[RMDB]
RNA sequence: GGGAACGACUCGAGUAGAGUCGAAAACAAGUACCAUCAGAUCACGGCCUUCACCACCGUUGAACUGGCUAAACUUAGAGAUGGCCGCUGCAAUCAGGUGAUCAUCUCCAUCACCACCGUUUAGCAAGCUUUUACCAUCGUUCGCGAUGGUAAAAGCAAAAGAAACAACAACAACAAC
Reactivity to DMS in 0.01 (KOAc 150mM, MgCl2 10mM, bicine 150mM(pH8.5), 24C), signal-to-noise 1, nucleotides 027 to 126: c200a200a120g000u110a070c090c040a130u010c000a100g060a090u000c040a060c020g000g000c030c020u000u010c160a090c110c080a190c000c010g000u030u000g030a030a030c020u000g000g080c040u010a000a030a090c050u000u010a180g010a060g010a020u000g020g010c030c010g010c020u000g000c090a130a060u010c240a130g000g030u000g000a000u000c020a000u020c000u000c020c090a070u000c150a070c160c090a190c060c140g000u000u000u000a020g010c000a030a150
Reactivity to 2A3 in 0.01 (KOAc 150mM, MgCl2 10mM, bicine 150mM(pH8.5), 24C), signal-to-noise 2, nucleotides 027 to 126: c130a090a010g100u000a050c050c040a110u110c010a000g000a060u050c010a000c010g000g050c010c030u150u040c020a000c040c000a020c000c010g000u040u120g050a010a040c040u040g000g030c010u000a060a090a070c040u070u160a030g000a000g000a040u060g010g050c000c030g030c060u070g020c030a100a240u260c040a140g030g030u040g030a020u030c030a030u000c010u000c000c000a090u110c030a060c100c010a100c060c000g000u000u050u040a010g000c020a050a040
Chemical mapping of a 177-nucleotide RNA with DMS and 2A3. For DMS, 698 sequencing reads were counted. The RNA was probed in 150 mM KOAc, 10 mM MgCl2 and 150 mM bicine (pH 8.5) at 24 C.